RNA sequence: GGGAACGACUCGAGUAGAGUCGAAAACAGUGCUAUAUCCUCAGCACCUAAAUCAGUGGCUAGAAUAUAGUAGACAUCCAAUAACUUUUGAAAGUGUUUUCAAAAUACUUUAGUUUUGAGAGAUUUAUGUGAGAUUUUAAGUAAAUAACUGACUAGACCCAAUUGUGGUAUUCGUACCACAAUUGGGAAAAGAAACAACAACAACAAC
Reactivity to 2A3 in 0.01 (KOAc 150mM, MgCl2 10mM, bicine 150mM(pH8.5), 24C), signal-to-noise 1, nucleotides 027 to 156: c050a030g130u000g050c020u000a020u000a000u020c000c000u000c070a040g050c020a070c000c030u150a270a240a030u210c030a050g020u040g180g010c000u020a000g000a070a070u000a000u000a020g000u000a000g030a030c020a030u000c030c000a000a000u080a010a080c150u070u100u120u300g100a100a030a070g000u000g000u000u020u030u110c200a150a150a000a030u000a020c020u180u240u130a030g030u050u000u060u020g050a080g070a000g050a160u070u300u130a080u090g020u090g000a020g020a110u050u100u260u010a040a050g000u020a070a000a300u020a060a040c000u000g100a000c020u040a000g090a070